[RMDB]
RNA sequence: GGGAACGACUCGAGUAGAGUCGAAAAUCCUUGGCAGUACCAUGUUGGAAGAUGAAUUCACACCUGAGGAUGUUAAUAUGCAGAUUAUGGGUGUGGUUAUGCAGAGUGGUGUGAGAAAAGUUACAUAAGACAUGCUACUUCGGUAGCAUGAAAAGAAACAACAACAACAAC
Reactivity to 2A3 in 0.01 (KOAc 150mM, MgCl2 10mM, bicine 150mM(pH8.5), 24C), signal-to-noise 9, nucleotides 027 to 129: u000c000c000u030u020g030g000c030a020g040u010a030c020c020a030u080g050u040u060g060g040a070a050g020a110u090g100a010a060u150u130c000a010c010a020c010c010u050g030a040g060g020a050u010g030u060u050a200a120u150a150u300g030c020a010g040a110u070u100a110u300g020g020g010u010g020u020g000g000u080u050a030u100g010c000a000g000a020g070u030g040g000u030g000u050g010a060g060a030a100a010a000g040u060u060a000c010a050u120a070a020g080a040
Reactivity to DMS in 0.01 (KOAc 150mM, MgCl2 10mM, bicine 150mM(pH8.5), 24C), signal-to-noise 5, nucleotides 027 to 129: u000c010c000u000u000g020g030c060a070g000u000a100c040c040a040u040g000u010u010g020g020a080a100g030a000u040g000a020a040u000u000c000a000c000a000c010c000u020g000a110g040g020a130u000g000u010u020a100a100u000a050u020g000c030a060g000a140u030u020a080u050g000g000g000u010g000u020g010g010u000u000a050u000g020c000a020g010a090g010u040g000g020u030g010u000g040a020g000a060a060a060a070g030u000u000a090c130a100u000a080a080g030a170